[RMDB]
RNA sequence: GGGAACGACUCGAGUAGAGUCGAAAAAAUAUGCUCGACAGGCUGCCUGUCCGACAGAGCUUUUAGAUCUUCUGAUCUUUCCCUGCAGCAUAUCGCUUAUGCAUCAAGCGAAUGUCGGAUCACACAAUCUACUAUAUGAGUUCGCUCAUAUAGUAGAAAAAGAAACAACAACAACAAC
Reactivity to 2A3 in 0.01 (KOAc 150mM, MgCl2 10mM, bicine 150mM(pH8.5), 24C), signal-to-noise 9, nucleotides 027 to 126: a000a000u240a050u080g010c020u020c030g050a030c050a060g050g040c040u040g080c010c030u050g030u020c010c010g010a010c010a030g020a010g010c000u020u030u000u020a010g000a010u010c010u270u040c160u300g010a010u000c000u010u010u000c000c000c010u020g020c020a030g000c020a020u100a080u130c010g000c020u050u030a070u210g140c060a110u140c090a030a010g000c000g010a050a000u020g010u020c020g020g030a060u120c040a030c010a000c010a130a100
Reactivity to DMS in 0.01 (KOAc 150mM, MgCl2 10mM, bicine 150mM(pH8.5), 24C), signal-to-noise 9, nucleotides 027 to 126: a070a070u010a060u010g010c030u000c030g010a130c130a080g000g010c070u000g010c040c100u000g010u000c010c010g020a020c030a070g000a090g010c090u000u000u000u000a020g000a010u000c000u000u010c300u010g010a010u000c000u000u000u000c000c000c010u000g020c070a070g010c010a070u000a100u000c030g010c020u000u000a080u000g010c190a100u010c150a040a010g010c000g010a040a060u000g010u000c020g000g000a070u010c150a090c150a080c190a070a090